[RMDB]
RNA sequence: GGGAACGACUCGAGUAGAGUCGAAAAUACUUAGUACGCGCGUAGUUGCAGGCAUUCCGGGUGCAGCAACUGACGCGCAAGACUUUUCCCAGAGUGUGCGCUUCAACUGGCGUGCUGAGUAGUGCACGAAUUGCACGUACGUUCGCGUACGUGCAAAGUAGUGACUAUGUUUCGACAUAGUCACUACAAAAGAAACAACAACAACAAC
Reactivity to 2A3 in 0.01 (KOAc 150mM, MgCl2 10mM, bicine 150mM(pH8.5), 24C), signal-to-noise 7, nucleotides 027 to 156: u090a010c030u040u030a000g010u030a030c040g010c020g000c010g040u010a010g020u010u000g000c060a130g110g000c010a030u100u100c140c200g180g070g020u010g000c020a010g000c000a000a000c010u070g090a030c010g010c000g010c000a000a000g020a000c010u050u030u030u020c000c010c010a010g030a020g030u090g020u010g010c010g000c020u050u090c050a140a090c080u120g100g000c070g030u050g000c020u020g010a020g020u120a020g020u060g040c040a030c060g060a110a120u050u010g000c000a000c000g000u000a000c010g010u010u050c210g000c000g080u000a000c000g000u010g000c000a000a000a010
Reactivity to DMS in 0.01 (KOAc 150mM, MgCl2 10mM, bicine 150mM(pH8.5), 24C), signal-to-noise 3, nucleotides 027 to 156: u000a060c060u000u000a090g030u010a040c090g020c000g040c020g060u000a070g010u000u000g020c000a160g040g020c000a030u000u000c030c300g000g080g160u010g000c000a300g020c000a030a020c010u010g000a030c000g020c010g000c000a000a010g010a060c060u000u000u000u010c010c010c010a300g010a090g010u000g020u010g010c000g000c000u000u000c070a080a110c120u010g020g000c070g010u000g020c010u000g010a070g000u010a080g010u010g000c030a070c040g020a090a250u000u000g000c000a020c010g010u000a000c000g030u000u000c300g040c030g030u000a010c010g010u000g000c010a000a000a050